[RMDB]
RNA sequence: GGGAACGACUCGAGUAGAGUCGAAAACGUAUACGUACGUAAUCGGCAUAUCGCGAUGCGCUAAUCGUACGAUCGAUAUCGUAGCAUCGGCGCCGAUUAGCUACGAUGCGCGCGCUAGCUAUAAUUACACUGAGAUUUCGUUCGCGAAAUCUCAGUGAAAAGAAACAACAACAACAAC
Reactivity to DMS in 0.01 (KOAc 150mM, MgCl2 10mM, bicine 150mM(pH8.5), 24C), signal-to-noise 2, nucleotides 027 to 126: c040g000u010a050u000a100c050g030u000a010c140g020u010a040a020u000c010g030g000c010a100u020a090u010c140g060c010g000a000u000g060c000g010c060u030a140a050u000c080g010u030a130c240g010a110u020c150g000a050u010a080u000c100g020u000a090g020c030a040u000c000g020g020c210g000c080c000g000a000u000u010a080g040c000u000a000c010g000a040u000g020c010g000c100g020c040g020c090u020a110g000c030u010a020u000a050a100u020u000a200
Reactivity to 2A3 in 0.01 (KOAc 150mM, MgCl2 10mM, bicine 150mM(pH8.5), 24C), signal-to-noise 2, nucleotides 027 to 126: c000g000u020a030u110a080c060g030u030a000c020g020u020a000a040u010c020g000g000c090a070u100a090u280c100g000c010g280a040u030g020c030g000c050u080a040a030u050c030g020u140a080c040g040a160u100c010g020a000u020a040u110c060g000u000a080g000c000a010u020c020g090g000c070g030c040c000g000a000u000u010a000g010c010u010a010c010g020a010u010g020c010g000c000g000c010g030c080u080a030g010c010u080a100u090a290a120u190u090a040
Overview
Structure probing data (DMS and 2A3) for a 177-nucleotide construct. Source: RMDB library OK2TRN, as collected in RNAgym. The RNA was probed in 150 mM KOAc, 10 mM MgCl2 and 150 mM bicine (pH 8.5) at 24 C. High 2A3 reactivity points to a flexible backbone, as in loops and unpaired stretches. For DMS the reverse transcriptase was MarathonRT.